RNA sequence: GGGAACGACUCGAGUAGAGUCGAAAACUUCUGCUUCGGCAGAAGAAAAAUCCUAAGUCACUCAACAGCGAUGGGGUGGCUGAUGACCUAUCGGAAACGAUAGCAAGGCCAUACAUCGACAUGAGUGAUAUGGAAAAAAGAACUGUUCGCAGUUCAAGUUAUAUGGGUUGUUCGCAACCCAUAUAACAAAAGAAACAACAACAACAAC
Reactivity to DMS in 0.01 (KOAc 150mM, MgCl2 10mM, bicine 150mM(pH8.5), 24C), signal-to-noise 1, nucleotides 027 to 156: c000u010u000c000u020g030c000u000u000c300g030g020c000a030g010a000a040g030a000a090a130a160a140u010c000c000u000a120a190g000u000c000a010c000u010c000a070a060c090a150g000c020g000a040u000g000g000g090g080u020g000g080c020u000g030a040u010g000a120c300c020u000a040u000c000g120g000a210a120a270c000g010a020u000a020g000c000a000a130g000g020c000c000a010u000a020c040a070u020c000g010a050c080a300u000g020a050g040u010g000a010u010a160u020g000g000a000a050a110a170a170a090g000a010a020c020u000g000u000u010c260g050c020a050g000u000u000c010a080a300
Reactivity to 2A3 in 0.01 (KOAc 150mM, MgCl2 10mM, bicine 150mM(pH8.5), 24C), signal-to-noise 5, nucleotides 027 to 156: c010u000u000c000u000g000c000u030u040c110g190g000c000a000g010a010a000g020a010a040a000a010a010u040c020c010u050a100a050g020u000c000a000c000u010c000a020a090c040a220g060c020g010a020u010g050g070g100g030u000g000g000c010u000g010a120u080g020a030c000c010u010a020u030c010g040g070a120a050a080c010g000a010u000a000g000c020a090a300g010g010c000c000a000u020a040c000a010u030c010g190a190c050a090u060g000a000g000u000g000a000u000a010u000g020g000a100a030a020a060a020a040g030a000a000c000u040g030u160u140c300g030c140a000g010u010u020c020a020a050